[RMDB]
RNA sequence: GGGAACGACUCGAGUAGAGUCGAAAAACUAUGAUGGAUCUUGUAUAUGCCCUGAGGCACUUUGAUCAAAAUAGCGAAGUGCUUAAGGCUAUCUUAGUGAAGUAUGGUUGCUGUGAUGUUACCUACUGUGUAAUCUAUACUUCGGUAUAGAUUACACAAAAGAAACAACAACAACAAC
Reactivity to DMS in 0.01 (KOAc 150mM, MgCl2 10mM, bicine 150mM(pH8.5), 24C), signal-to-noise 2, nucleotides 027 to 126: a070c050u000a050u010g000a040u000g000g000a080u010c010u000u020g010u000a020u000a040u020g010c070c010c040u000g010a100g010g010c000a010c000u000u000u000g020a070u000c230a110a100a100a110u020a130g020c000g010a010a000g010u000g010c000u000u000a160a100g000g000c010u000a010u000c030u000u000a030g010u000g000a280a130g010u000a030u000g010g000u000u000g010c030u020g020u010g000a100u020g020u000u000a080c070c020u000a100c160u000
Reactivity to 2A3 in 0.01 (KOAc 150mM, MgCl2 10mM, bicine 150mM(pH8.5), 24C), signal-to-noise 1, nucleotides 027 to 126: a020c070u090a080u230g090a000u060g040g000a010u030c000u010u060g100u100a040u000a020u180g000c010c010c000u030g030a020g030g000c010a000c000u010u030u010g060a070u090c070a000a170a190a050u120a070g070c010g010a000a000g000u010g000c000u020u010a010a010g010g000c010u010a010u000c000u010u060a020g010u010g010a020a010g020u010a030u080g000g030u030u010g050c120u050g060u100g160a080u110g030u100u050a070c030c020u010a010c030u020

Chemical mapping of a 177-nucleotide RNA with DMS and 2A3. The data come from the RNA Mapping Database (RMDB), library 15KREP. The reactions ran in a buffer of 150 mM KOAc, 10 mM MgCl2 and 150 mM bicine (pH 8.5), at 24 C. For 2A3, 782 sequencing reads were counted.